[RMDB]
RNA sequence: GGGAACGACUCGAGUAGAGUCGAAAAGGGCCGGGGCCUGAAGGAGAUUCCGCGCGACAUUCCCCUGCACACAACUGAGCUUUUGCUCAACGACAACGAACUGGGACGCAUCAGUUCCGAUGGCCUCCUAUCCACACAGGUUCGCCUGUGUGGAUAGAAAAGAAACAACAACAACAAC
Reactivity to 2A3 in 0.01 (KOAc 150mM, MgCl2 10mM, bicine 150mM(pH8.5), 24C), signal-to-noise 2, nucleotides 027 to 126: g040g030g010c060c030g040g000g010g000c050c020u060g020a080a060g060g020a060g010a060u190u000c020c060g010c000g000c020g100a030c010a100u100u080c010c000c020c030u070g000c060a060c010a020c010a090a070c090u050g010a000g020c040u130u180u280u300g000c000u030c000a030a040c070g050a010c020a080a020c030g050a040a010c010u050g000g000g070a030c050g030c060a070u100c030a060g030u070u040c040c010g080a060u030g010g020c040c020u060c000
Reactivity to DMS in 0.01 (KOAc 150mM, MgCl2 10mM, bicine 150mM(pH8.5), 24C), signal-to-noise 2, nucleotides 027 to 126: g030g030g020c060c050g040g000g020g020c080c000u000g010a090a110g010g000a080g000a110u010u000c110c050g010c090g010c050g040a200c090a150u000u000c040c000c010c110u020g020c080a080c070a110c120a080a080c130u000g010a020g000c010u010u000u000u000g010c010u000c010a040a150c060g000a070c080a020a110c090g020a040a050c060u000g000g020g000a160c120g000c070a060u010c040a060g010u000u000c020c050g010a100u000g020g000c020c020u010c070